[RMDB]
RNA sequence: GGGAACGACUCGAGUAGAGUCGAAAAUGUUACUGCUGCUACAGUGAAUCCCCCUGUGCGGUGGGGUGUAAUUGGUUAUCAAUGGAAACAGCUGUUUGUUUGCCACACGAGUCACGGUAUAGCCAGCGAGAUACUCUGAGUUCGCUCAGAGUAUCUCAAAAGAAACAACAACAACAAC
Reactivity to 2A3 in 0.01 (KOAc 150mM, MgCl2 10mM, bicine 150mM(pH8.5), 24C), signal-to-noise 1, nucleotides 027 to 126: u100g000u040u060a090c040u020g030c050u040g000c030u040a020c030a010g020u000g020a100a130u100c000c000c000c030c020u020g010u050g010c040g050g030u100g000g010g000g000u000g000u010a050a020u050u060g000g030u050u110a160u070c020a100a040u120g020g020a040a040a000c000a000g000c040u120g060u060u090u040g080u000u050u080g000c010c000a020c020a010c040g060a070g070u130c020a020c040g040g020u050a030u030a110g040c060c010a040g000c080
Reactivity to DMS in 0.01 (KOAc 150mM, MgCl2 10mM, bicine 150mM(pH8.5), 24C), signal-to-noise 2, nucleotides 027 to 126: u010g000u000u000a090c070u000g010c060u000g000c030u010a060c010a030g010u000g010a120a110u000c000c000c010c110c030u010g010u000g020c070g010g030u000g020g000g020g010u010g040u000a090a100u000u000g000g010u010u010a060u010c050a060a090u000g010g010a100a050a030c070a030g000c110u020g020u000u000u000g020u010u000u020g020c010c030a020c050a090c040g020a100g000u000c030a050c080g010g040u000a050u010a080g030c040c070a100g040c170
An RNA of 177 nucleotides, treated with 2A3 and DMS and read out base by base. The RNA was probed in 150 mM KOAc, 10 mM MgCl2 and 150 mM bicine (pH 8.5) at 24 C. For DMS, 1,639 sequencing reads were counted. As a SHAPE reagent, 2A3 marks flexible, mostly unpaired nucleotides at the ribose 2'-OH.